RNA sequence: GGGAACGACUCGAGUAGAGUCGAAAACGUGCCUUCAUGCUAAGGGUUUGAUAUCUGCUAAAACCCGGUGCAUUCAUCAAUGCAGGUUAAGCCAAAGGGAUGUCCCGACCGGAGGCCGACAAUCCAGGACAUUCACCCGAUUCGUCGGGUGAAUGUCAAAAGAAACAACAACAACAAC
Reactivity to DMS in 0.01 (KOAc 150mM, MgCl2 10mM, bicine 150mM(pH8.5), 24C), signal-to-noise 2, nucleotides 027 to 126: c090g020u000g020c000c020u060u010c030a050u000g000c030u030a300a120g020g000g000u000u000u010g000a150u030a030u000c020u010g000c020u030a170a060a000a000c000c020c040g000g000u000g000c000a000u030u040c120a000u060c180a060a060u000g010c000a020g020g000u000u010a230a120g040c010c050a010a300a180g010g000g020a110u010g010u000c000c000c000g010a050c020c020g000g020a300g000g000c000c010g010a140c150a020a040u000c070c120a140g000
Reactivity to 2A3 in 0.01 (KOAc 150mM, MgCl2 10mM, bicine 150mM(pH8.5), 24C), signal-to-noise 2, nucleotides 027 to 126: c040g090u130g010c010c010u030u060c080a050u070g000c020u010a030a020g050g000g000u000u000u000g010a030u010a030u090c040u050g010c020u000a020a030a000a000c000c000c000g000g000u000g000c010a070u060u280c030a060u060c050a120a080u150g020c000a020g040g070u020u060a020a020g000c000c000a080a000a000g000g020g010a030u100g020u040c000c000c020g010a010c000c000g020g000a010g010g000c000c000g000a010c030a070a030u060c060c010a060g130